An RNA of 177 nucleotides, treated with 2A3 and DMS and read out base by base.
Values are in units of 0.01, from 0 to 300, in steps of 10.
For 2A3 the reverse transcriptase was SuperScript II with manganese.
For DMS the reverse transcriptase was MarathonRT.
Conditions: 150 mM KOAc, 10 mM MgCl2 and 150 mM bicine (pH 8.5), 24 C.

RNA sequence: GGGAACGACUCGAGUAGAGUCGAAAAUUCUUUUUAACAAGCAUAUCCUACCUUGGAAACGGAUUAUCCGGCGAUAAGGAGGAUGCCUUGGCAAAGCACUUUACUUUUUGAAGUGUCCUGCGCGCCCAUACUUCAUCUUAUUCGUAAGAUGAAGUAUAAAAGAAACAACAACAACAAC
Reactivity to 2A3 in 0.01 (KOAc 150mM, MgCl2 10mM, bicine 150mM(pH8.5), 24C), signal-to-noise 9, nucleotides 027 to 126: u030u040c010u030u080u020u040u140a070a040c020a010a000g000c010a040u040a060u300c020c010u090a300c010c000u010u000g010g010a040a060a010c000g000g030a060u110u120a110u300c010c000g050g020c060g050a010u020a050a010g000g000a000g000g000a000u010g000c010c010u010u020g040g000c040a050a040a030g020c000a010c010u030u040u110a090c030u110u200u160u160u300g030a020a000g000u010g020u060c020c040u050g000c050g000c020g030c010c000c000
Reactivity to DMS in 0.01 (KOAc 150mM, MgCl2 10mM, bicine 150mM(pH8.5), 24C), signal-to-noise 9, nucleotides 027 to 126: u010u010c010u000u000u010u010u030a060a300c030a020a020g010c050a070u030a140u000c010c000u000a110c010c000u000u000g000g000a180a160a030c010g000g000a290u020u020a120u020c000c000g000g000c020g000a300u050a000a000g000g010a060g010g000a010u000g010c230c010u000u000g000g010c070a040a130a120g000c030a010c010u000u000u010a080c280u010u010u010u020u020g000a020a020g010u000g000u010c080c100u000g010c150g010c130g010c010c010c030